[RMDB]
Structure probing data (2A3 and DMS) for a 177-nucleotide construct.
RNA sequence: GGGAACGACUCGAGUAGAGUCGAAAACAAGAGACACUGUGGAUCUGAUCUGGGGCCAACUACCUCUAUCAGGUGAGUUAGUUAAAAAACGUCUAGUGGGCCAAACCCAGGGGGGAUCCCUGGUUUCGUACUGUUUUUAGUUCGCUAAAAACAGUACAAAAGAAACAACAACAACAAC
Reactivity to 2A3 in 0.01 (KOAc 150mM, MgCl2 10mM, bicine 150mM(pH8.5), 24C), signal-to-noise 9, nucleotides 027 to 126: c050a030a050g030a000g020a030c050a030c240u080g100u300g060g000a000u000c010u030g020a020u020c000u020g000g000g050g010c010c010a010a000c010u010a010c020c010u010c010u070a150u300c130a090g100g160u090g040a010g000u010u020a000g010u010u020a030a070a010a020a010a010c040g040u070c150u150a060g030u060g040g010g000c050c020a060a020a040c000c000c010a000g010g000g000g020g010g010a010u020c010c000c000u000g010g000u000u010u030c020
Reactivity to DMS in 0.01 (KOAc 150mM, MgCl2 10mM, bicine 150mM(pH8.5), 24C), signal-to-noise 5, nucleotides 027 to 126: c060a120a090g010a070g000a050c040a110c030u020g020u020g020g000a020u000c000u000g010a300u040c020u000g020g010g000g000c030c020a050a010c020u000a030c030c000u020c050u020a130u040c190a090g020g020u000g000a030g020u000u000a030g000u020u000a000a030a090a060a090a070c110g000u030c090u060a110g020u020g020g000g000c090c140a070a100a170c120c010c000a010g010g000g000g010g000g000a010u000c000c000c010u000g000g010u000u000u010c020
Notes:
DMS adducts were read by reverse transcription with MarathonRT.